[RMDB]
Source information
The record gives the reactivity of an RNA of 177 nucleotides to 2A3 and DMS. 2A3 is a SHAPE reagent: it acylates the 2'-hydroxyl of flexible nucleotides of all four kinds. 2A3 adducts were read by reverse transcription with SuperScript II with manganese.
RNA sequence: GGGAACGACUCGAGUAGAGUCGAAAAUCAGUCAGAGCCCACUUCUCAGGAGGGUGUUUUCUGACUCCUGCCUGGUGGGGUCCCUGAAGAUGAUGCCAAGCCACCUGGGCUUCCUCUCUGGUACAGGCGCAGUUCAGUAGUUCGCUACUGAACUGCGAAAAGAAACAACAACAACAAC
Reactivity to 2A3 in 0.01 (KOAc 150mM, MgCl2 10mM, bicine 150mM(pH8.5), 24C), signal-to-noise 4, nucleotides 027 to 126: u050c010a000g070u010c010a000g020a040g040c010c020c030a060c020u190u050c080u030c060a030g050g000a060g040g080g010u060g200u110u170u110u080c100u070g090a100c000u000c000c000u030g090c020c020u030g000g000u050g040g010g000g040u040c030c000c000u040g040a020a060g060a050u110g020a030u100g000c030c040a010a010g060c000c000a040c010c020u040g000g000g030c000u080u050c000c010u040c020u070c050u100g060g050u090a040c010a040g050g000
Reactivity to DMS in 0.01 (KOAc 150mM, MgCl2 10mM, bicine 150mM(pH8.5), 24C), signal-to-noise 1, nucleotides 027 to 126: u010c020a060g100u000c060a020g010a180g000c070c000c000a000c000u000u000c110u000c060a050g040g020a020g010g020g030u000g020u080u000u000u040c190u000g000a080c000u020c010c000u000g050c120c180u010g000g000u010g000g010g000g000u050c300c080c000u060g000a070a020g040a070u000g000a040u000g020c000c030a050a040g000c020c000a030c030c010u030g000g000g000c020u010u040c030c020u000c040u010c000u050g000g000u010a170c050a000g000g000
For DMS the reverse transcriptase was MarathonRT. The RNA was probed in 150 mM KOAc, 10 mM MgCl2 and 150 mM bicine (pH 8.5) at 24 C.